Source: RMDB library OK2TST, as collected in RNAgym. An RNA of 177 nucleotides, treated with 2A3 and DMS and read out base by base. 2A3 adducts were read by reverse transcription with SuperScript II with manganese. High 2A3 reactivity points to a flexible backbone, as in loops and unpaired stretches. For DMS the reverse transcriptase was MarathonRT.
RNA sequence: GGGAACGACUCGAGUAGAGUCGAAAAAUCAUAUGUAUGAUGCUUUUGCAAAAGUGCGAGGUCGCUUGAUUGUUUCAUGUUAUGCUUCGAACUUUAUACGUAUUCAGCAAGUUUUAAAUAUUGCUAGCUGUGCUGAUUGAUUCGUCAAUCAGCACAGAAAAGAAACAACAACAACAAC
Reactivity to 2A3 in 0.01 (KOAc 150mM, MgCl2 10mM, bicine 150mM(pH8.5), 24C), signal-to-noise 3, nucleotides 027 to 126: a000u130c020a000u070a020u080g040u050a010u080g130a050u070g080c040u160u240u260u300g000c010a050a040a020a000g010u010g000c020g000a000g050g050u120c090g000c020u000u080g000a060u070u150g230u260u200u020c000a000u020g040u020u150a160u270g020c020u020u000c010g000a000a000c010u030u070u040a040u010a060c000g020u030a060u040u100c020a000g030c010a030a030g030u040u070u100u260a180a190a060u250a040u000u050g000c020u000a040g100
Reactivity to DMS in 0.01 (KOAc 150mM, MgCl2 10mM, bicine 150mM(pH8.5), 24C), signal-to-noise 2, nucleotides 027 to 126: a090u010c060a010u000a040u000g020u000a020u010g000a120u000g000c040u010u000u010u000g020c020a110a060a040a020g000u000g020c000g020a020g000g010u030c300g010c030u000u010g010a020u000u020g010u000u000u010c030a010u000g010u010u010a130u010g020c020u010u000c020g010a040a020c030u000u000u000a300u010a060c030g000u010a070u000u010c090a000g010c020a030a030g020u000u000u020u020a050a060a090u010a080u000u000g010c050u010a110g000